[RMDB]
RNA sequence: GGGAACGACUCGAGUAGAGUCGAAAACUUUGAUACCUAACUGUUCAAAGUCAUCUCUUUUCCAAAGAAAGACCCAAGUUCAAAGGGUGUUAAGGUAGUGCAGAGUAAACAGAAGUGGCUUUGGAAGCCACAUCAUCCUCUUCGGAGGAUGAUGUGGAAAAGAAACAACAACAACAAC
Reactivity to 2A3 in 0.01 (KOAc 150mM, MgCl2 10mM, bicine 150mM(pH8.5), 24C), signal-to-noise 2, nucleotides 027 to 126: c020u050u010u140g070a030u070a080c010c030u060a080a130c080u090g070u090u000c010a030a000a020g040u000c010a130u020c040u010c000u050u050u040u060c020c010a020a030a060g070a020a130a000g030a020c000c030c010a040a050g090u090u090c070a010a050a090g020g010g000u030g030u110u100a050a020g050g040u030a010g070u100g070c030a030g030a030g080u090a080a110a040c040a010g010a100a000g050u010g030g040c000u030u020u020g010g050a020a000g050
Reactivity to DMS in 0.01 (KOAc 150mM, MgCl2 10mM, bicine 150mM(pH8.5), 24C), signal-to-noise 3, nucleotides 027 to 126: c030u000u010u000g010a060u020a060c000c050u010a080a160c180u020g000u000u000c000a040a080a040g000u000c040a090u000c070u000c000u020u000u000u000c070c090a070a060a140g010a040a050a110g010a050c020c020c030a100a160g000u010u000c210a060a080a260g010g010g010u000g020u000u000a060a030g010g010u000a040g010u000g000c060a080g020a090g010u010a040a020a050c140a050g000a030a090g010u010g020g000c010u000u000u010g000g010a080a110g010

Chemical mapping of a 177-nucleotide RNA with 2A3 and DMS. 2A3 adducts were read by reverse transcription with SuperScript II with manganese. For DMS, 2,322 sequencing reads were counted. The 2A3 profile rests on 1,588 reads. The reactions ran in a buffer of 150 mM KOAc, 10 mM MgCl2 and 150 mM bicine (pH 8.5), at 24 C.